[RMDB]
RNA sequence: GGGAACGACUCGAGUAGAGUCGAAAAGAAGCGCACGAGCGGGUCCGGACGAUGUUGGCCGAAACGGUCGACACCGAACUGUGGCAUGCCCAGCGGGUGCUGCAGGCCGCCUCGACGGCCGCGGUGGACGUGCUUCGGUAUUCGUACCGAAGCACGUAAAAGAAACAACAACAACAAC
Reactivity to 2A3 in 0.01 (KOAc 150mM, MgCl2 10mM, bicine 150mM(pH8.5), 24C), signal-to-noise 1, nucleotides 027 to 126: g050a090a010g090c060g040c030a040c100g130a090g000c040g010g030g050u000c030c050g000g000a000c010g060a040u060g000u010u040g000g040c010c030g110a260a210a020c140g010g000u010c010g000a010c000a000c000c010g030a040a040c000u030g050u090g070g040c060a100u140g040c040c000c030a010g060c050g000g010g070u070g000c040u060g020c040a040g010g020c010c010g080c100c030u070c060g300a300c000g030g000c000c060g000c040g000g060u080g070g050
Reactivity to DMS in 0.01 (KOAc 150mM, MgCl2 10mM, bicine 150mM(pH8.5), 24C), signal-to-noise 1, nucleotides 027 to 126: g020a100a170g000c080g020c040a010c060g000a130g000c040g030g020g000u010c030c010g010g040a270c010g000a020u000g000u010u000g010g020c000c000g000a060a070a160c160g050g000u010c000g000a010c010a000c030c010g000a060a150c030u010g000u010g010g010c070a070u000g000c000c000c040a100g000c090g000g000g010u010g010c010u010g010c020a070g060g010c030c060g020c070c070u010c260g010a090c030g020g000c010c070g000c030g020g030u000g010g000